[RMDB]
RNA sequence: GGGAACGACUCGAGUAGAGUCGAAAAACUGAUCUGACGAUCAAGCACGUGAGCAGGAGUAUCGAAGAGGAUUAGAGACCCACGUAGUUCCUUGCAGUCAACGAUGCCAACGUAGUGGUGAUUUUGGCUAGUGCAAAAACUUCGGUUUUUGCACUAGAAAAGAAACAACAACAACAAC
Reactivity to 2A3 in 0.01 (KOAc 150mM, MgCl2 10mM, bicine 150mM(pH8.5), 24C), signal-to-noise 1, nucleotides 027 to 126: a030c010u000g020a040u060c020u040g120a020c020g010a050u030c050a050a050g040c000a040c070g160u130g080a080g000c000a030g000g050a060g090u090a040u040c010g020a080a010g090a140g010g010a020u070u060a030g040a050g050a090c000c020c000a020c040g000u020a020g010u010u000c010c000u050u080g020c000a010g020u010c010a020a050c060g030a100u070g050c040c010a040a010c070g070u050a050g080u020g040g050u070g070a160u060u060u060u090g010g000
Reactivity to DMS in 0.01 (KOAc 150mM, MgCl2 10mM, bicine 150mM(pH8.5), 24C), signal-to-noise 2, nucleotides 027 to 126: a090c060u000g010a050u000c010u030g040a100c090g020a030u000c090a090a100g000c080a090c140g000u020g010a110g020c050a100g000g040a210g000u010a010u000c050g000a060a120g010a170g000g000a070u000u000a070g000a150g020a100c020c010c010a040c100g030u040a100g010u000u010c020c020u000u010g020c060a100g010u000c050a020a050c080g000a080u000g020c000c040a030a110c100g020u000a060g010u010g010g000u000g000a100u000u000u020u000g030g000